This 177-nucleotide RNA was probed chemically with DMS and 2A3.
Values cover nucleotides 27 to 126.
The data come from the RNA Mapping Database (RMDB), library RFM100.
For DMS the reverse transcriptase was MarathonRT.
For DMS, 1,253 sequencing reads were counted.
The reactions ran in a buffer of 150 mM KOAc, 10 mM MgCl2 and 150 mM bicine (pH 8.5), at 24 C.
[RMDB]
RNA sequence: GGGAACGACUCGAGUAGAGUCGAAAAAAAGAAGCACCACUGAGACCGCUCGUAGAAGACGAGUUCGAUAGACUUGGGGUGUACGCGUCGAGGCAACGAGACGUUUAGCCCGCGAGUACUAACAGGUACACAGUGCUGGAUUCGUCCAGCACUGUGUAAAAGAAACAACAACAACAAC
Reactivity to DMS in 0.01 (KOAc 150mM, MgCl2 10mM, bicine 150mM(pH8.5), 24C), signal-to-noise 1, nucleotides 027 to 126: a010a000a110g000a130a120g000c000a020c020c010a030c040u050g000a020g000a000c290c040g000c000u000c000g010u030a160g050a140a020g020a030c030g000a000g020u000u010c080g000a120u010a020g000a070c000u000u000g030g070g000g010u000g000u000a030c300g060c010g020u000c000g000a300g000g000c220a030a100c010g000a300g000a000c000g030u000u000u000a020g000c000c010c000g000c010g000a000g000u000a050c020u000a000a050c110a070g000g020u000
Reactivity to 2A3 in 0.01 (KOAc 150mM, MgCl2 10mM, bicine 150mM(pH8.5), 24C), signal-to-noise 2, nucleotides 027 to 126: a000a000a000g160a060a000g020c030a030c020c010a040c020u030g010a020g010a040c020c030g010c010u000c030g030u070a070g040a240a000g070a030c040g010a000g000u050u110c100g020a060u100a070g040a000c000u000u000g030g020g000g000u060g040u020a020c060g020c000g010u060c010g040a030g020g000c040a020a020c000g000a000g010a030c010g010u010u000u040a000g010c010c000c050g150c030g050a000g050u010a130c010u030a090a060c020a030g000g060u040